[RMDB]
RNA sequence: GGGAACGACUCGAGUAGAGUCGAAAACGGCGAAUUUGGUUAUCUCUCUGCGGUUUUUCCGUAUGACACCGCCACCGGUGCGGUGCUGCAAAUCCGCCUUGCUGCGCUGACCAAUGACCCCGGUGCCCACUUUUUCGUGAUUCGUCACGAAAAAGUGAAAAGAAACAACAACAACAAC
Reactivity to 2A3 in 0.01 (KOAc 150mM, MgCl2 10mM, bicine 150mM(pH8.5), 24C), signal-to-noise 2, nucleotides 027 to 126: c010g020g000c020g000a030a040u040u040u030g060g000u080u070a190u060c030u000c010u000c030u010g010c020g050g080u030u000u010u150u120c040c030g010u050a070u180g050a060c010a010c010c020g020c040c020a180c110c160g100g010u150g000c000g010g020u000g000c010u000g000c010a010a020a050u030c010c000g000c000c020u010u040g010c070u020g000c050g020c030u030g020a020c000c010a020a030u030g020a020c040c020c000c000g030g070u080g020c000c020
Reactivity to DMS in 0.01 (KOAc 150mM, MgCl2 10mM, bicine 150mM(pH8.5), 24C), signal-to-noise 4, nucleotides 027 to 126: c120g010g020c200g010a040a100u000u000u000g000g000u000u000a030u000c030u000c040u010c050u010g030c000g000g010u010u010u010u010u000c110c120g030u000a060u000g000a140c010a010c010c020g010c010c040a300c220c200g010g010u010g040c000g000g010u000g020c020u000g000c050a030a030a040u000c040c000g000c020c140u010u010g000c080u000g000c060g010c040u000g000a050c000c020a020a050u000g010a300c210c100c010c010g010g010u000g020c020c020